An RNA of 177 nucleotides, treated with 2A3 and DMS and read out base by base.
For 2A3 the reverse transcriptase was SuperScript II with manganese.
[RMDB]
RNA sequence: GGGAACGACUCGAGUAGAGUCGAAAACCAGAUCAUAGAUCUGGCCACCAUUUCUGCAUUCAUUAACAAUCAAGAAGUCAUGGCCCAAUUACCAACACGUGUUAUGGUGACUGGCAGCUUGAUCCAAUAUUAACUAAUGCUUCGGCAUUAGUUAAUAAAAAGAAACAACAACAACAAC
Reactivity to 2A3 in 0.01 (KOAc 150mM, MgCl2 10mM, bicine 150mM(pH8.5), 24C), signal-to-noise 8, nucleotides 027 to 126: c000c000a010g000a020u100c150a240u150a200g030a020u000c010u000g000g000c020c010a040c010c010a070u040u150u090c060u120g050c040a100u020u140c020a060u100u210a170a050c040a050a040u030c000a020a020g010a030a010g030u020c010a060u130g040g000c000c000c000a040a080u080u070a030c010c020a140a110c070a040c280g130u150g020u240u050a070u200g000g010u030g050a090c010u010g010g010c010a000g010c020u010u010g010a010u020c010c010a070a060
Reactivity to DMS in 0.01 (KOAc 150mM, MgCl2 10mM, bicine 150mM(pH8.5), 24C), signal-to-noise 7, nucleotides 027 to 126: c010c000a020g000a020u000c010a180u010a180g000a030u000c010u010g000g000c040c040a240c020c020a110u000u000u000c050u000g010c120a070u010u000c070a070u010u010a100a090c160a120a050u000c050a060a040g000a060a050g020u010c050a030u000g010g000c130c010c020a040a080u010u000a030c030c020a060a080c160a130c260g020u020g000u010u010a080u010g010g000u000g000a080c090u000g000g020c030a040g000c030u000u000g000a020u010c060c070a050a120
The reactions ran in a buffer of 150 mM KOAc, 10 mM MgCl2 and 150 mM bicine (pH 8.5), at 24 C.